[RMDB]
RNA sequence: GGGAACGACUCGAGUAGAGUCGAAAAGAUAUGGAGUAUCGACAUGGAGCGAAUGUUCGGAAACGAACAAACUCCAACAGCGAGUACUCCUAAGUCAAAGCGUACGUAGGUUCGCCUACGUACGCAAUCAAUUUAACAGCUUCGGCUGUUAAAUUGAAAAAGAAACAACAACAACAAC
Reactivity to 2A3 in 0.01 (KOAc 150mM, MgCl2 10mM, bicine 150mM(pH8.5), 24C), signal-to-noise 3, nucleotides 027 to 126: g040a020u080a060u180g000g000a000g000u010a000u030c040g070a100c150a110u100g020g000a000g020c100g140a300a140u120g000u000u000c010g000g040a100a060a070c000g000a000a000c010a020a070a060c000u000c000c010a000a020c010a020g040c010g030a030g130u030a010c000u000c010c000u010a120a010g060u060c040a120a060a000g020c000g000u010a000c000g010u000a010g030g070u020u060c300g150c030c000u000a000c000g000u000a000c000g020c000a010a000
Reactivity to DMS in 0.01 (KOAc 150mM, MgCl2 10mM, bicine 150mM(pH8.5), 24C), signal-to-noise 4, nucleotides 027 to 126: g000a050u000a300u000g000g000a000g010u000a060u010c010g010a060c110a270u000g000g000a030g030c040g010a120a140u000g000u010u000c010g000g000a080a090a190c000g010a010a010c010a030a170a100c000u010c000c000a020a080c300a130g010c020g000a050g030u000a020c010u000c010c010u010a040a090g000u000c040a100a100a120g000c000g020u000a000c010g020u000a000g010g020u000u000c280g010c020c000u010a000c010g010u010a000c010g010c010a000a010